[RMDB]
RNA sequence: GGGAACGACUCGAGUAGAGUCGAAAACACUAGGCCAAGUUUACCAGCUCUAUAAUGCUCAUGAUGACAUACUUACACCGUUAGUGUCUGCAGGCAUAUUUGGCUUCACAGUGGAGGAGUCACUUGUGUGCCUGUGCCGCAACGUAACGGCUAAUACAAUGCGUAGGGGUUUCGACCCCUACGCAUUAAAAGAAACAACAACAACAAC
Reactivity to 2A3 in 0.01 (KOAc 150mM, MgCl2 10mM, bicine 150mM(pH8.5), 24C), signal-to-noise 2, nucleotides 027 to 156: c020a000c030u030a090g020g020c000c000a080a000g010u000u030u070a090c040c050a010g030c010u020c040u050a200u040a080a160u160g020c040u030c030a030u190g080a100u190g010a030c040a100u150a010c040u080u180a020c090a020c080c010g010u030u000a110g050u040g030u040c040u050g040c020a100g000g000c000a000u050a090u120u170u150g000g000c000u140u140c010a010c000a000g030u040g000g150a160g130g010a000g180u150c000a010c030u140u000g040u010g020u030g050c010c000u010g000u000g020c010c000g000c030a000a060c000g020u050a010a000c010g020g040c000u030a050a000u060a120c050